[RMDB]
RNA sequence: GGGAACGACUCGAGUAGAGUCGAAAAUGUUUCCUCUUCCUAGGUCCGGAGUCGACCUCCAUCUGAUCCGUCCUGGCUCUCUUCGCCGGGGGAGCUCCCUCCCCAUCCUUGUCCUUUCUUAUUAUUCACUUUUCCUAUUGUUCGCAAUAGGAAAAGUAAAAGAAACAACAACAACAAC
Reactivity to DMS in 0.01 (KOAc 150mM, MgCl2 10mM, bicine 150mM(pH8.5), 24C), signal-to-noise 3, nucleotides 027 to 126: u010g000u000u000u000c000c020u000c080u000u010c010c030u000a060g000g010u000c050c060g020g010a040g010u000c040g010a110c040c000u000c030c030a070u000c110u010g010a110u000c020c020g000u000c040c030u010g010g000c010u000c050u000c050u010u000c110g010c060c040g020g000g000g020g000a050g010c050u000c040c030c000u000c010c000c020c020a100u010c080c020u000u000g010u000c050c070u010u000u000c040u000u000a080u020u000a150u010u000c110
Reactivity to 2A3 in 0.01 (KOAc 150mM, MgCl2 10mM, bicine 150mM(pH8.5), 24C), signal-to-noise 2, nucleotides 027 to 126: u100g020u000u000u010c010c010u020c020u040u010c000c010u050a040g060g010u000c010c040g140g000a050g060u070c010g020a070c030c000u010c010c000a090u070c070u090g040a040u030c020c010g090u030c060c060u000g010g000c000u020c000u000c040u120u110c050g060c020c030g010g010g000g000g000a010g000c030u100c020c000c000u020c020c000c000c000a020u000c000c020u060u060g040u070c020c020u070u080u050c030u070u140a220u160u050a080u120u130c020

About this RNA: Conditions: 150 mM KOAc, 10 mM MgCl2 and 150 mM bicine (pH 8.5), 24 C. Chemical mapping of a 177-nucleotide RNA with DMS and 2A3. For 2A3, 1,819 sequencing reads were counted. For DMS, 3,682 sequencing reads were counted.